[RMDB]
RNA sequence: GGGAACGACUCGAGUAGAGUCGAAAAGGCGUAGCCGACAACAUGCCCAGGUAGCCCAGACCUUCAAGGCUACGGUGCGUUGCGACGCACGGUCUGAUUCUUCCCAACGACGUUCACCGCGUCUUCUACAACCGGCAAAGAUUCGUCUUUGCCGGAACUAGAAGUAGGGUUUCGACCCUACUUCUAGAAAAGAAACAACAACAACAAC
Reactivity to 2A3 in 0.01 (KOAc 150mM, MgCl2 10mM, bicine 150mM(pH8.5), 24C), signal-to-noise 4, nucleotides 027 to 156: g040g010c080g060u070a050g020c030c010g080a070c050a080a020c020a070u200g030c020c020c020a030g030g020u020a000g010c020c000c020a050g050a110c030c060u100u080c090a040a040g000g000c000u000a000c020g000g000u040g010c000g000u030u060g030c110g110a010c030g010c010a010c030g030g000u040c010u020g040a070u140u020c040u080u020c030c000c010a050a030c060g010a000c000g040u170u260c060a030c080c030g000c000g000u010c030u070u020c030u060a080c050a100a050c010c000g000g000c000a000a010a000g000a000u030u130c190g030u010c130u000u010u010g000c010c020g010g010a000a000
Reactivity to DMS in 0.01 (KOAc 150mM, MgCl2 10mM, bicine 150mM(pH8.5), 24C), signal-to-noise 2, nucleotides 027 to 156: g000g000c000g020u000a110g020c000c010g010a190c040a070a060c030a060u000g020c010c010c090a090g040g040u000a060g010c020c010c190a150g010a120c070c040u000u000c100a060a290g030g000c000u000a020c020g000g020u010g020c010g020u000u000g010c070g010a140c060g020c010a040c010g000g000u000c040u000g040a170u000u010c050u000u000c020c020c030a080a120c040g010a080c020g010u000u000c040a070c100c080g000c020g000u000c030u000u000c020u000a150c110a140a250c010c000g000g020c010a020a030a040g000a060u000u010c280g040u000c000u000u000u000g000c000c000g010g000a000a010